This 177-nucleotide RNA was probed chemically with DMS and 2A3.
As a SHAPE reagent, 2A3 marks flexible, mostly unpaired nucleotides at the ribose 2'-OH.
The data come from the RNA Mapping Database (RMDB), library TTRDEL.
RNA sequence: GGGAACGACUCGAGUAGAGUCGAAAAGAUAUGGACGAGAUAGGACAUGUUCAAUCGGAAACGAUUGACAACAGCCUACCUCGUCCUAAGUCAAACCGCUGUAGUUAGUUCGCUAACUACAGCGGAAGGAGACUAAAGAGUUCGCUCUUUAGUCUCCAAAAGAAACAACAACAACAAC
Reactivity to DMS in 0.01 (KOAc 150mM, MgCl2 10mM, bicine 150mM(pH8.5), 24C), signal-to-noise 3, nucleotides 027 to 126: g000a030u000a290u010g000g000a010c010g010a020g000a030u000a010g000g010a150c140a100u000g000u000u010c000a010a020u010c010g000g000a070a070a160c000g000a020u000u000g000a060c300a050a080c090a070g000c000c000u000a000c020c000u000c000g000u000c000c000u000a000a030g010u000c000a120a110a150c000c000g000c000u000g010u000a000g000u000u000a000g000u000u010c250g030c000u000a010a010c000u000a000c000a000g000c000g000g000a010a010
Reactivity to 2A3 in 0.01 (KOAc 150mM, MgCl2 10mM, bicine 150mM(pH8.5), 24C), signal-to-noise 3, nucleotides 027 to 126: g010a010u030a020u090g000g010a000c010g000a000g000a020u000a010g030g030a120c140a250u070g020u110u090c010a010a010u000c000g020g000a010a030a030c010g000a010u000u020g010a010c020a030a040c030a020g090c010c000u010a000c000c000u010c010g000u010c000c000u010a000a000g000u020c010a000a040a090c000c000g000c000u010g000u000a000g010u000u010a010g000u030u070c300g010c240u000a000a010c000u000a010c000a010g000c000g000g000a010a000
The RNA was probed in 150 mM KOAc, 10 mM MgCl2 and 150 mM bicine (pH 8.5) at 24 C.
The 2A3 profile rests on 11,627 reads.